[RMDB]
The record gives the reactivity of an RNA of 207 nucleotides to 2A3 and DMS.
The RNA was probed in 150 mM KOAc, 10 mM MgCl2 and 150 mM bicine (pH 8.5) at 24 C.
The DMS profile rests on 2,083 reads.
Values cover nucleotides 27 to 156.
Source: RMDB library OK3TST, as collected in RNAgym.
DMS adducts were read by reverse transcription with MarathonRT.
RNA sequence: GGGAACGACUCGAGUAGAGUCGAAAACGGAGGAUGACACUAAUGAAUAAUCGCGAACAAAUUGAACAAUCAGUUAUAAGUGCUAGUGCGUAUAACGGUAAUGACACAGAGGGAUUACUAAAAGAGAUUGAGGACGUUUAUAAGAAAGCGCAAGCGACCACUAAUCCAUCUUCGGAUGGAUUAGUGGAAAAGAAACAACAACAACAAC
Reactivity to 2A3 in 0.01 (KOAc 150mM, MgCl2 10mM, bicine 150mM(pH8.5), 24C), signal-to-noise 3, nucleotides 027 to 156: c030g000g030a020g040g010a060u060g030a030c020a010c070u110a110a090u110g040a060a070u140a100a050u090c030g020c020g010a030a000c040a020a080a050u110u140g010a060a020c060a080a120u130c010a020g010u050u040a100u030a150a030g010u010g100c040u050a030g040u020g070c020g030u080a030u030a100a030c020g000g000u030a080a070u100g030a010c010a000c010a030g020a040g020g010g010a020u030u090a040c030u080a010a080a040a060g080a010g010a020u040u120g020a020g020g020a000c030g010u000u100u000a130u010a050a060g060a120a050a010g000c040g020c020a030a020g000c000g020a020
Reactivity to DMS in 0.01 (KOAc 150mM, MgCl2 10mM, bicine 150mM(pH8.5), 24C), signal-to-noise 1, nucleotides 027 to 156: c150g000g020a100g010g030a110u000g000a080c030a120c030u000a070a070u000g000a150a100u000a070a110u000c080g070c040g000a100a110c060a060a060a100u000u000g010a080a060c100a060a080u010c050a080g020u000u000a050u000a000a060g010u000g020c080u000a050g000u030g000c070g000u000a070u010a070a060c000g030g040u010a040a050u000g010a080c040a070c040a070g010a220g000g010g020a060u000u000a050c080u000a060a030a050a090g000a090g000a130u000u010g010a090g000g000a070c030g000u010u000u000a080u000a120a140g000a090a040a070g010c010g000c070a050a070g010c020g010a160